[RMDB]
RNA sequence: GGGAACGACUCGAGUAGAGUCGAAAAUACCGCAGGCCUGCGGUGCGGCAGUGUGGAGACCUGCCGUAAGCCGUGUUCUUUUGACAACCGGGAGAAAGCGUAUGCGGAGGCAGCGCUUUCAGGGUCUAAAAGUAUGGGAUCUUCGGAUCCCAUACAACAUUUUCACCCUCUUCGGAGGGUGAAAAUGAAAAGAAACAACAACAACAAC
Reactivity to 2A3 in 0.01 (KOAc 150mM, MgCl2 10mM, bicine 150mM(pH8.5), 24C), signal-to-noise 3, nucleotides 027 to 156: u090a010c010c000g010c000a030g000g000c000c040u040g000c050g010g010u010g000c000g000g010c000a000g020u060g010u120g260g100a050g030a070c000c000u000g000c000c000g000u000a020a000g000c000c010g100u070g030u150u030c100u060u260u110u230g050a070c040a040a010c020c000g010g020g010a010g000a000a000a000g010c010g000u050a300u220g020c040g020g060a040g290g060c010a010g010c010g000c000u000u000u000c000a000g010g000g000u000c010u020a040a090a040a010g000u000a010u000g000g000g000a000u000c000u030u090c150g120g000a000u000c010c000c000a000u000a010c000a000a000

Chemical mapping of a 207-nucleotide RNA with 2A3. The reactions ran in a buffer of 150 mM KOAc, 10 mM MgCl2 and 150 mM bicine (pH 8.5), at 24 C. For 2A3 the reverse transcriptase was SuperScript II with manganese. Values cover nucleotides 27 to 156. Values are in units of 0.01, from 0 to 300, in steps of 10.